[RMDB]
RNA sequence: GGGAACGACUCGAGUAGAGUCGAAAAGUUUAAGCUCCAAGAUCGGUGGAUAGCAGCCCUAUCAAUAUCUAGGAGAACUGUGCUAUGUUUAGAAGAUUAGGUAGUCUCUAAACAGAACAAUUUACCUCAUACGUUAGGACGUUCGCGUCCUAACGAAGACCAUUAUAAACUUCGGUUUAUAAUGGUCAAAAGAAACAACAACAACAAC
Reactivity to 2A3 in 0.01 (KOAc 150mM, MgCl2 10mM, bicine 150mM(pH8.5), 24C), signal-to-noise 8, nucleotides 027 to 156: g010u040u080u110a070a010g030c000u000c010c010a030a020g010a040u050c110g120g200u110g090g030a040u030a030g020c060a020g020c040c000c010u010a020u030c020a060a070u030a010u170c020u050a060g000g020a020g030a040a030c050u060g010u020g070c020u030a020u090g010u000u000u010a080g010a290a000g000a030u040u040a020g040g010u030a020g010u010c000u000c000u010a010a010a000c010a010g030a040a020c100a040a030u050u060u060a020c010c010u060c040a100u090a170c010g000u000u000a000g000g000a000c000g010u030u040c150g020c010g090u000c000c000u000a000a000c000g000a010a010
Reactivity to DMS in 0.01 (KOAc 150mM, MgCl2 10mM, bicine 150mM(pH8.5), 24C), signal-to-noise 3, nucleotides 027 to 156: g020u010u020u000a090a110g000c010u010c020c010a100a120g020a040u000c100g020g060u010g010g010a130u010a090g040c100a190g050c130c150c020u000a120u010c050a080a140u010a080u000c060u000a070g020g030a300g010a060a050c050u000g030u010g030c020u000a150u000g010u000u000u000a000g010a100a100g010a040u000u010a090g040g020u000a120g030u000c010u000c010u010a020a000a020c010a020g000a070a000c020a050a030u000u000u000a130c020c030u000c060a130u010a140c010g030u000u000a000g020g000a020c010g030u010u000c300g020c030g000u000c000c000u000a000a000c000g020a020a080